Structure probing data (DMS and 2A3) for a 177-nucleotide construct.
Source: RMDB library OK1LIB, as collected in RNAgym.
DMS adducts were read by reverse transcription with MarathonRT.
The reactions ran in a buffer of 150 mM KOAc, 10 mM MgCl2 and 150 mM bicine (pH 8.5), at 24 C.

[RMDB]
RNA sequence: GGGAACGACUCGAGUAGAGUCGAAAAACUAGUAUGUACAGGGGUGAGUUGACCUGUCAUCUAGACUGCUGACCAUCAACUCACCGGUCAGCUGGAUGAUGUCCACAGCGUACGACAUCAGUACUCAGUGUAUGGACUAGUUCGCUGGUCUAUACACAAAAGAAACAACAACAACAAC
Reactivity to DMS in 0.01 (KOAc 150mM, MgCl2 10mM, bicine 150mM(pH8.5), 24C), signal-to-noise 9, nucleotides 027 to 126: a190c000u000a010g010u050a010u000g000u040a010c000a020g000g010g000g010u020g010a080g020u000u000g000a070c020c030u000g000u000c000a010u010c010u010a020g000a180c060u000g010c010u010g000a020c010c070a180u020c110a050a050c090u010c070a070c150c110g000g000u000c010a000g000c000u000g000g010a110u010g000a020u000g000u000c000c160a140c100a130g010c080g010u010a120c200g010a010c020a010u010c030a060g010u020a080c050u010c060a200
Reactivity to 2A3 in 0.01 (KOAc 150mM, MgCl2 10mM, bicine 150mM(pH8.5), 24C), signal-to-noise 9, nucleotides 027 to 126: a000c000u010a000g050u110a050u050g060u070a010c010a010g030g020g040g050u120g080a130g040u060u060g090a070c010c010u010g000u000c000a000u000c000u010a020g070a120c040u040g000c000u000g000a000c010c010a050u110c040a060a100c050u040c100a050c040c020g000g000u000c000a000g000c000u010g030g020a040u040g000a000u020g020u000c020c040a090c060a070g070c020g080u110a030c040g010a000c000a010u010c010a010g040u050a060c020u020c080a020